Structure probing data (2A3 and DMS) for a 177-nucleotide construct. The data come from the RNA Mapping Database (RMDB), library RFMREP.

RNA sequence: GGGAACGACUCGAGUAGAGUCGAAAAGCAUGGGUUUGGAUUAUGACAGGCCCAUCCCCCUGGACCUCUCAUAGUGCCCCAUGCCAGAGCAAACUGUGGCCCCGAACCAUUGCCUGGCUUCUGUACCGUGAAUGUAAAUCUUCGGAUUUACAUUCACAAAAGAAACAACAACAACAAC
Reactivity to 2A3 in 0.01 (KOAc 150mM, MgCl2 10mM, bicine 150mM(pH8.5), 24C), signal-to-noise 3, nucleotides 027 to 126: g050c030a010u010g010g000g070u090u130u090g090g040a060u060u100a070u240g080a020c010a010g000g000c000c000c000a030u070c010c000c000c000c000u010g050g010a050c010c010u000c000u000c010a030u030a050g020u100g120c000c000c000c000a000u040g000c010c010a020g040a020g040c040a050a060a060c090u160g050u080g140g010c000c030c030c000g030a030a030c030c010a040u050u040g000c010c020u000g040g000c050u100u000c040u070g070u050a100c020c070
Reactivity to DMS in 0.01 (KOAc 150mM, MgCl2 10mM, bicine 150mM(pH8.5), 24C), signal-to-noise 4, nucleotides 027 to 126: g030c110a010u000g010g010g010u010u010u010g010g000a090u010u010a050u020g000a120c080a010g020g000c000c000c000a020u010c020c010c010c030c060u000g000g000a040c020c010u000c160u000c020a020u010a050g020u000g000c040c010c000c030a040u000g010c010c020a060g010a120g010c040a050a070a090c140u000g020u000g000g000c030c030c080c060g000a080a130c070c070a090u010u010g010c030c010u000g010g000c030u010u000c030u000g000u010a090c200c130
For 2A3, 4,223 sequencing reads were counted.